This 177-nucleotide RNA was probed chemically with 2A3 and DMS. The reactions ran in a buffer of 150 mM KOAc, 10 mM MgCl2 and 150 mM bicine (pH 8.5), at 24 C. The data come from the RNA Mapping Database (RMDB), library OK2TRN. The 2A3 profile rests on 1,314 reads.
RNA sequence: GGGAACGACUCGAGUAGAGUCGAAAAUACGCCCCGACACUGAGCAGCCCGACGCUCCUGGCGCCGCUGGUCGUGGCGAUCUCCGUCAUACCCGUCCUAUCUGUUCUCGUCGAGUGUGCACCUACGGUAAUGCGUAGGGGUUCGCCCCUACGCAUUAAAAAGAAACAACAACAACAAC
Reactivity to 2A3 in 0.01 (KOAc 150mM, MgCl2 10mM, bicine 150mM(pH8.5), 24C), signal-to-noise 1, nucleotides 027 to 126: u100a040c010g050c000c010c000c000g010a000c030a020c090u140g070a020g060c040a050g020c020c020c030g100a050c020g040c060u030c070c030u070g040g000c030g010c010c020g060c010u040g100g000u040c030g030u040g030g000c010g010a030u000c040u010c000c010g060u050c000a080u050a070c010c010c030g040u000c010c010u080a100u070c020u070g100u100u040c020u010c070g100u020c020g000a010g030u080g020u060g050c040a060c040c010u060a030c040g050g040
Reactivity to DMS in 0.01 (KOAc 150mM, MgCl2 10mM, bicine 150mM(pH8.5), 24C), signal-to-noise 2, nucleotides 027 to 126: u000a160c090g000c030c010c030c020g000a020c030a070c090u040g030a140g030c010a090g020c020c080c050g000a070c080g000c020u000c070c060u010g000g000c050g010c040c020g010c010u000g000g020u000c040g010u020g010g010c010g000a050u000c040u010c030c040g030u000c050a070u010a140c040c030c030g000u000c020c020u000a080u000c060u000g010u000u010c020u010c030g020u010c070g000a090g010u010g020u030g010c070a130c020c020u000a070c100g020g000
For DMS, 2,064 sequencing reads were counted. Reactivities are rounded to 0.1 and cut off at 0 and 3.